[RMDB]
RNA sequence: GGGAACGACUCGAGUAGAGUCGAAAAGAUAUGGAGUGUCCACGACACCUAUAAUCUCGGAAACGAGGUAGGUGAAGUGGAGCACUCCUAAGUCAAAGGAUGUUGAUACUUCGGUAUCAACAUCCAAUCCGUCAGAUAACUUCGGUUAUCUGACGGAAAAAGAAACAACAACAACAAC
Reactivity to 2A3 in 0.01 (KOAc 150mM, MgCl2 10mM, bicine 150mM(pH8.5), 24C), signal-to-noise 1, nucleotides 027 to 126: g030a040u020a030u120g000g000a000g000u000g010u070c010c010a000c010g010a010c000a010c000c040u030a060u070a300a300u120c000u000c010g050g020a020a090a040c020g010a000g000g020u010a000g050g010u020g000a040a020g000u000g000g000a000g000c000a000c000u000c000c000u000a030a010g020u040c080a090a020a110g020g010a020u000g000u040u000g010a020u010a020c020u070u160c300g020g020u010a010u020c000a000a000c000a000u010c000c020a000a000
Reactivity to DMS in 0.01 (KOAc 150mM, MgCl2 10mM, bicine 150mM(pH8.5), 24C), signal-to-noise 2, nucleotides 027 to 126: g040a040u020a300u000g000g000a020g040u000g010u000c000c010a000c010g010a300c000a000c000c000u020a010u000a280a090u000c000u010c000g020g000a130a110a140c020g030a010g050g000u010a000g010g010u010g000a050a300g020u000g000g000a050g020c020a000c000u000c010c000u000a000a040g000u000c090a100a100a100g000g010a060u000g050u000u010g000a000u000a030c010u000u000c200g010g000u000a000u000c000a000a000c000a000u000c010c010a040a010